[RMDB]
RNA sequence: GGGAACGACUCGAGUAGAGUCGAAAACUAGUGCCAUUCGUGGCACUAGAAGGGGUCCACCCUGGAAAGGCUGGAGGUAUUGGAAUGGUCGGGCCGCCAUUCAAGGUACGCUAUUCGUAGCGUACAAUUGUAUGCUACGUUUCGACGUAGCAUACAAAAAAGAAACAACAACAACAAC
Reactivity to 2A3 in 0.01 (KOAc 150mM, MgCl2 10mM, bicine 150mM(pH8.5), 24C), signal-to-noise 2, nucleotides 027 to 126: c010u000a000g000u010g020c020c000a010u060u020c210g110u060g010g000c020a000c000u000a000g000a010a010g040g010g020g000u000c000c000a010c000c000c030u020g110g200a190a040a010g040g000c080u040g020g000a000g050g010u120a200u170u300g130g010a010a000u010g030g000u010c030g000g020g000c010c010g000c000c000a000u020u000c010a000a000g160g030u010a000c010g010c000u020a040u010u160c250g070u040a010g000c000g000u000a000c000a010a020
Reactivity to DMS in 0.01 (KOAc 150mM, MgCl2 10mM, bicine 150mM(pH8.5), 24C), signal-to-noise 3, nucleotides 027 to 126: c000u000a000g020u000g010c000c000a070u000u020c200g010u000g010g010c000a000c000u010a000g010a060a060g000g010g000g010u000c010c020a070c220c010c020u000g000g020a120a100a040g010g010c140u000g050g020a050g000g000u010a090u010u010g010g010a020a010u010g000g010u000c010g000g000g000c010c020g000c010c000a010u000u000c010a110a100g010g020u010a000c000g010c000u000a030u010u020c140g010u000a000g010c000g000u000a000c000a040a080

Structure probing data (2A3 and DMS) for a 177-nucleotide construct. The 2A3 profile rests on 2,311 reads. The DMS profile rests on 3,731 reads. For 2A3 the reverse transcriptase was SuperScript II with manganese. The RNA was probed in 150 mM KOAc, 10 mM MgCl2 and 150 mM bicine (pH 8.5) at 24 C.